[RMDB]
RNA sequence: GGGAACGACUCGAGUAGAGUCGAAAAGGUCUGCUAUUUCUAUUUACGUUUUAGUACUCUGGAAACAGAAUCUACUAAAACAAGGCAAAAUGCCGUGUUUAUCUCGUCAACUUGUUGGCGAGAUCUGAUGAGUUGGUACUUUUCGAAGUACCAACUCGCCGAUUAACAUCUUCGGAUGUUAAUCGGCAAAAGAAACAACAACAACAAC
Reactivity to DMS in 0.01 (KOAc 150mM, MgCl2 10mM, bicine 150mM(pH8.5), 24C), signal-to-noise 1, nucleotides 027 to 156: g020g010u010c020u010g030c020u000a060u000u000u000c030u010a140u030u000u010a100c140g020u030u000u000u020a020g110u000a050c250u010c010u000g010g020a300a130a220c000a070g010a050a040u000c040u000a050c010u010a020a020a010a020c000a090a090g030g040c000a060a100a040a200u000g050c010c010g000u000g040u000u000u000a030u010c010u000c010g000u000c010a010a030c040u000u010g050u000u010g000g000c000g020a020g000a010u000c070u020g020a140u010g030a000g000u000u000g010g020u000a010c000u010u000u010u010c300g030a010a020g000u000a020c020c000a000a010c000u000c000
Reactivity to 2A3 in 0.01 (KOAc 150mM, MgCl2 10mM, bicine 150mM(pH8.5), 24C), signal-to-noise 3, nucleotides 027 to 156: g080g000u100c060u100g100c050u110a140u140u230u060c090u080a290u130u180u150a090c160g020u000u000u010u030a000g000u000a000c000u000c000u000g000g000a030a050a050c000a000g010a010a030u050c030u030a000c000u010a000a000a000a000c010a010a020g030g000c030a000a090a070a230u160g020c000c000g050u020g060u040u130u050a030u020c000u000c000g020u000c010a020a000c050u130u220g020u080u010g150g000c010g010a000g000a000u000c030u070g160a250u060g000a020g010u000u010g000g000u000a000c000u040u040u070u110c190g040a010a010g000u000a000c000c000a010a000c000u000c000
The data come from the RNA Mapping Database (RMDB), library PDB130. Structure probing data (DMS and 2A3) for a 207-nucleotide construct. As a SHAPE reagent, 2A3 marks flexible, mostly unpaired nucleotides at the ribose 2'-OH. The reactions ran in a buffer of 150 mM KOAc, 10 mM MgCl2 and 150 mM bicine (pH 8.5), at 24 C.